[RMDB]
RNA sequence: GGGAACGACUCGAGUAGAGUCGAAAAACACGAACAUUUACUGCAGCACCAAUUGAUACACUAUUGAGUGGUAAAGUCUGUGUAGAUGAUUUCAACAAUCAAUUCUAUGAUUUACACACAAAAGGACAUUGUUAAGAUGAUUCGUCAUCUUAACAAUAAAAGAAACAACAACAACAAC
Reactivity to DMS in 0.01 (KOAc 150mM, MgCl2 10mM, bicine 150mM(pH8.5), 24C), signal-to-noise 9, nucleotides 027 to 126: a080c080a090c140g000a050a060c030a030u000u000u000a020c030u010g040c030a030g010c080a100c060c030a040a060u010u010g010a110u000a090c160a090c140u000a080u010u000g010a080g020u000g000g000u010a060a050a080g010u010c030u000g020u010g010u000a010g010a020u000g010a090u000u000u000c120a080a120c210a040a030u000c030a030a100u010u000c110u000a060u010g000a050u000u000u000a060c100a070c110a050c140a050a040a060a080g010g010a090c190
Reactivity to 2A3 in 0.01 (KOAc 150mM, MgCl2 10mM, bicine 150mM(pH8.5), 24C), signal-to-noise 9, nucleotides 027 to 126: a000c070a010c060g020a040a010c020a030u010u030u040a040c050u100g010c000a010g010c020a010c030c000a030a020u040u040g030a040u080a120c110a010c140u060a050u130u140g070a050g020u030g020g020u070a080a050a030g030u020c020u030g030u010g010u020a010g000a020u020g030a050u010u110u080c050a070a050c030a050a040u040c010a010a070u240u030c040u100a110u070g030a020u030u060u150a060c110a010c020a000c010a030a110a040a030g110g010a020c030